This 207-nucleotide RNA was probed chemically with 2A3 and DMS.
RNA sequence: GGGAACGACUCGAGUAGAGUCGAAAACGAUCAGUACGUUCGCGUACUGAUCGAAGCUACUGGAGACAGUAGCAAGUCUAAGACCUUGUUAGGUGGAAACAAGGAAAAAUGGAGGAAGGACGGACCUCCAUACUUAGACAACCGCCAACCGUCCAAACAUAUGAGUAGUGUUCGCACUACUCAUAUGAAAAGAAACAACAACAACAAC
Reactivity to 2A3 in 0.01 (KOAc 150mM, MgCl2 10mM, bicine 150mM(pH8.5), 24C), signal-to-noise 9, nucleotides 027 to 156: c010g000a000u000c000a000g000u010a000c010g010u030u090c240g000c010g100u000a000c000u000g000a000u000c000g000a000a000g000c000u000a000c000u000g010g020a050g010a040c000a010g000u000a000g000c000a000a020g000u000c000u000a010a030g010a160c000c000u010u000g010u020u050a140g040g150u100g100g070a060a020a010c010a010a000g040g000a060a080a050a020a020u030g010g000a000g010g020a120a210g020g000a010c010g000g040a090c000c000u000c000c000a000u010a010c000u000u000a000g000a000c020a050a060c070c050g090c070c030a020a020c000c000g000u000c000c000a000a030a000
Reactivity to DMS in 0.01 (KOAc 150mM, MgCl2 10mM, bicine 150mM(pH8.5), 24C), signal-to-noise 3, nucleotides 027 to 156: c000g000a010u000c010a000g000u000a010c010g030u000u010c300g020c020g050u000a000c000u000g020a000u000c000g020a030a040g010c010u000a010c010u000g010g000a300g010a290c000a030g020u000a000g010c000a060a110g030u000c020u010a000a070g010a300c000c000u000u000g010u000u000a050g000g030u010g060g020a300a100a020c010a000a020g020g010a010a040a040a140a110u000g010g010a040g000g000a040a040g010g000a060c000g010g010a250c000c000u000c000c000a020u000a030c050u000u000a010g000a060c020a120a140c090c030g000c050c020a090a110c000c000g020u000c010c020a110a170a300
It was measured as part of the RMDB library OK3TST. The RNA was probed in 150 mM KOAc, 10 mM MgCl2 and 150 mM bicine (pH 8.5) at 24 C.